This 177-nucleotide RNA was probed chemically with 2A3 and DMS.
Conditions: 150 mM KOAc, 10 mM MgCl2 and 150 mM bicine (pH 8.5), 24 C.
RNA sequence: GGGAACGACUCGAGUAGAGUCGAAAAGAGCUGAAGUACAGCAAGAACGACGCCAUCCUUGGCACAGCGUCGAAGAUAAGCGUGCCGAAUGCCAAGGAUUAACGGCACGCGAGGCGAAGACGCCAGAAUUACUAGGUACUUUCGAGUACCUAGUAAUAAAAGAAACAACAACAACAAC
Reactivity to 2A3 in 0.01 (KOAc 150mM, MgCl2 10mM, bicine 150mM(pH8.5), 24C), signal-to-noise 9, nucleotides 027 to 126: g110a020g000c010u020g040a160a040g190u220a160c010a010g000c010a020a050g070a100a020c050g020a010c020g000c010c030a040u010c010c000u030u010g000g010c040a010c070a080g020c020g010u030c040g060a060a010g070a100u220a120a020g000c000g000u000g000c010c000g030a080a050u060g010c010c020a030a000g010g000a000u030u070a050a030c000g000g000c000a000c000g000c000g010a030g000g010c030g040a160a060g100a100c040g000c000c000a030g060a050
Reactivity to DMS in 0.01 (KOAc 150mM, MgCl2 10mM, bicine 150mM(pH8.5), 24C), signal-to-noise 9, nucleotides 027 to 126: g010a180g010c000u010g000a130a140g030u030a170c020a020g010c010a130a110g010a130a200c060g010a040c040g010c010c110a150u020c010c000u000u000g000g010c020a080c230a170g010c020g000u010c020g010a110a120g000a130u030a060a100g000c000g010u000g010c000c010g000a070a070u010g010c010c020a040a080g000g020a070u010u020a050a140c010g000g000c000a010c010g000c000g000a040g010g010c010g010a190a110g020a120c050g020c000c050a120g010a130